Overview: Structure probing data (DMS and 2A3) for a 207-nucleotide construct. It was measured as part of the RMDB library OK3TST.
[RMDB]
RNA sequence: GGGAACGACUCGAGUAGAGUCGAAAAGCCGUGCAGCGACGACUUGACCUGGUUGGCCAAGGCGGAAAGCCGGCCGCGAUUGAGGCUGUGUUUAGAGGAUAUAAAGUACAGCUGCCCCAGCACGGUGUUUUUGGGGAUGUGUGUGUUGUCGCCGACGGACUACUACUGGUUUCGACCAGUAGUAGUCAAAAGAAACAACAACAACAAC
Reactivity to DMS in 0.01 (KOAc 150mM, MgCl2 10mM, bicine 150mM(pH8.5), 24C), signal-to-noise 2, nucleotides 027 to 156: g000c020c000g060u000g030c010a210g000c030g020a030c030g020a050c020u000u000g000a060c020c010u020g010g010u030u000g040g040c020c010a010a080g020g020c000g010g030a110a120a120g010c000c010g010g000c000c010g030c020g010a160u000u010g030a170g000g010c000u000g020u000g030u010u000u000a130g010a130g010g000a190u010a140u000a050a060a110g020u000a070c010a100g020c010u000g020c020c010c000c000a160g020c020a040c020g000g050u010g010u000u000u000u000u000g020g010g040g030a250u010g010u000g010u000g040u020g030u000u010g020u000c010g010c010c000g000a300c260g010
Reactivity to 2A3 in 0.01 (KOAc 150mM, MgCl2 10mM, bicine 150mM(pH8.5), 24C), signal-to-noise 2, nucleotides 027 to 156: g070c000c000g000u030g000c090a090g020c060g060a020c010g010a040c090u140u120g040a070c000c030u110g170g000u230u240g030g040c070c130a220a140g080g000c050g080g140a210a040a000g010c000c000g000g000c000c000g010c000g050a130u030u140g080a000g050g050c000u010g020u000g000u030u030u090a110g000a100g190g010a050u090a030u110a300a170a010g000u060a030c000a010g010c000u030g010c060c000c000c000a000g000c020a000c000g020g000u000g020u020u260u020u070u060g000g000g010g000a050u030g070u000g000u000g030u000g000u090u020g010u010c000g000c020c020g010a040c040g050
Reactivities are given for positions 27 through 156. For DMS, 4,857 sequencing reads were counted. For 2A3, 769 sequencing reads were counted.